[RMDB]
Structure probing data (DMS and 2A3) for a 177-nucleotide construct.
Source: RMDB library OK1LIB, as collected in RNAgym.

RNA sequence: GGGAACGACUCGAGUAGAGUCGAAAAGAAAAGUAGUCUACACGUUGACUGCGAACGUGGAAAAAGGUACCAGGCCUUGGUACCGAAGGCCGAAACGUACUAAACUCAUGUACGGAUGAGGAAGAAAGGGAUUCUUUAUCUUCGGAUAAAGAAUCCCAAAAGAAACAACAACAACAAC
Reactivity to DMS in 0.01 (KOAc 150mM, MgCl2 10mM, bicine 150mM(pH8.5), 24C), signal-to-noise 1, nucleotides 027 to 126: g050a020a050a110a080g010u030a040g000u010c010u000a150c040a000c020g000u010u000g000a160c010u000g000c210g000a000a000c000g010u010g070g040a110a190a090a110a040g000g000u000a000c000c000a000g020g010c200c160u010u000g000g000u000a000c000c000g010a010a040g010g000c060c000g000a150a030a090c090g000u000a030c000u020a030a200a070c250u000c170a080u030g010u000a030c000g010g000a080u000g000a300g030g050a090a010g000a070a060a160
Reactivity to 2A3 in 0.01 (KOAc 150mM, MgCl2 10mM, bicine 150mM(pH8.5), 24C), signal-to-noise 2, nucleotides 027 to 126: g140a000a180a010a000g040u260a010g010u000c080u080a030c020a000c000g030u000u050g070a100c050u230g070c030g090a000a000c000g030u060g000g150a000a100a040a000a040g030g030u000a000c000c030a090g130g210c020c110u190u020g020g010u000a000c000c000g010a000a000g090g000c000c000g010a000a050a030c030g020u050a000c000u040a000a110a220c080u060c080a120u090g000u020a000c000g070g010a180u000g000a030g010g010a030a000g000a050a100a060
For 2A3, 910 sequencing reads were counted.